[RMDB]
RNA sequence: GGGAACGACUCGAGUAGAGUCGAAAACAGGAGAUCGGCAUAGCUCCAUUCUACUAUGCAUCUAGUCGUCGUUUUCGACGUCUAGUAUAGCCCGACACUGCUGGGGCGAUGAACAGCAGAUUACCACUACCCGUAGCGUGGGUUAUGGCUACGUACAGAUGAGGUAUGGGUUCGCCCAUACCUCAUCAAAAGAAACAACAACAACAAC
Reactivity to 2A3 in 0.01 (KOAc 150mM, MgCl2 10mM, bicine 150mM(pH8.5), 24C), signal-to-noise 2, nucleotides 027 to 156: c030a000g010g000a030g000a040u120c050g070g020c010a000u000a000g000c030u060c100c000a080u070u100c060u060a110c000u020a010u050g020c010a050u010c030u010a000g000u040c000g000u000c000g020u030u030u160u300c030g000a000c000g000u000c000u000a000g000u050a050u080a040g010c000c010c010g010a040c070a030c100u000g000c000u000g000g010g020g030c100g040a180u150g050a090a060c020a000g000c000a000g020a020u040u080a030c010c000a040c030u050a050c020c000c040g010u020a000g030c050g050u140g010g000g000u010u120a080u130g010g000c040u030a010c020g060u060a010c080a090